[RMDB]
RNA sequence: GGGAACGACUCGAGUAGAGUCGAAAAGAUAUGGACCGUCAAAUGAGCGAUAAGCUGUCACUCGGAAACGAGUGUAGCUUUUGACGCUCUAUGACGGUCCUAAGUCAAAUCACGCUUCGGCGUGAAACAUAAGGAGGGGCUUCGGCCCCUCCUUAUGAAAAGAAACAACAACAACAAC
Reactivity to DMS in 0.01 (KOAc 150mM, MgCl2 10mM, bicine 150mM(pH8.5), 24C), signal-to-noise 1, nucleotides 027 to 126: g000a020u000a300u000g000g000a020c010c000g040u000c000a020a090a190u000g000a030g000c000g050a100u000a000a000g000c010u000g000u030c000a000c000u010c000g030g000a070a140a190c000g010a000g040u000g000u000a000g000c000u000u030u030u010g020a240c040g040c000u010c000u000a200u000g000a020c030g000g030u000c000c000u000a000a090g000u020c020a060a090a160u000c010a010c010g020c000u010u000c300g030g000c000g030u010g000a010a040a190